[RMDB]
An RNA of 177 nucleotides, treated with 2A3 and DMS and read out base by base.
Values cover nucleotides 27 to 126.
It was measured as part of the RMDB library RFMREP.
RNA sequence: GGGAACGACUCGAGUAGAGUCGAAAAGCAGUGGUCUCUGGAGUCUGCAGGAGCAGGCCAGCCCUGCACUGAACGCCUGUUCUUGCCAGGUGGCAGAAGGUUGCUGCAAAAUCCGGGUUCGCCCGGACAAUAUCUUUUUGUUCGCAAAAAGAUAUUGAAAAGAAACAACAACAACAAC
Reactivity to 2A3 in 0.01 (KOAc 150mM, MgCl2 10mM, bicine 150mM(pH8.5), 24C), signal-to-noise 3, nucleotides 027 to 126: g000c000a000g000u010g010g010u020c000u010c000u020g050g040a050g040u000c000u000g000c000a000g000g030a020g000c000a000g020g000c010c020a000g010c040c030c050u130g030c050a010c000u020g040a230a060c050g000c000c000u000g010u020u010c020u010u040g030c090c040a010g010g030u030g070g040c010a000g010a110a010g030g000u020u010g000c000u000g000c000a000a010a000a050u000c010c000g020g000g020u040u060c210g050c030c000c000g020g010a000
Reactivity to DMS in 0.01 (KOAc 150mM, MgCl2 10mM, bicine 150mM(pH8.5), 24C), signal-to-noise 5, nucleotides 027 to 126: g010c010a010g020u000g010g010u000c000u000c010u000g010g010a300g000u000c010u000g010c000a020g000g000a050g030c000a010g000g010c020c040a040g010c080c030c120u010g010c100a090c020u000g000a120a140c150g010c010c000u000g000u000u000c010u000u000g000c150c050a010g010g010u010g000g000c010a020g010a050a040g010g000u000u000g010c010u000g010c010a080a060a070a140u000c000c000g010g000g020u000u010c260g010c000c000c010g000g000a020